[RMDB]
RNA sequence: GGGAACGACUCGAGUAGAGUCGAAAAGAUAUGGAGCAUGGGGAGAGCGAGUGUCGGAAACGACACGAGCUCAUCGAUCCCGCUGCUCCUAAGUCAAAAGGCUUUACCUGUUCGCAGGUAAAGCCAACAUCUUUGUAAACUUCGGUUUACAAAGAUGAAAAGAAACAACAACAACAAC
Reactivity to DMS in 0.01 (KOAc 150mM, MgCl2 10mM, bicine 150mM(pH8.5), 24C), signal-to-noise 7, nucleotides 027 to 126: g000a030u010a300u000g010g010a000g010c010a020u010g000g010g000g010a090g010a030g020c010g000a300g010u000g010u000c000g010g000a090a050a190c010g010a010c000a000c000g000a300g010c000u000c070a030u010c210g010a300u010c000c000c010g010c120u000g000c000u000c000c000u000a020a060g010u000c040a080a080a100a130g010g020c000u000u000u000a000c000c000u000g000u000u010c190g010c000a010g000g000u000a010a000a010g010c000c000a010a050
Reactivity to 2A3 in 0.01 (KOAc 150mM, MgCl2 10mM, bicine 150mM(pH8.5), 24C), signal-to-noise 3, nucleotides 027 to 126: g030a010u060a020u120g000g000a000g020c020a040u140g030g000g010g000a200g010a000g010c010g000a040g010u010g000u010c010g010g040a090a040a040c000g020a000c000a020c000g000a000g000c020u020c010a020u020c010g030a080u050c000c000c050g060c050u000g000c000u010c000c000u010a070a020g050u020c030a000a030a090a160g000g000c000u020u000u000a010c000c000u020g040u050u130c300g010c130a000g000g010u010a010a010a000g000c000c010a000a000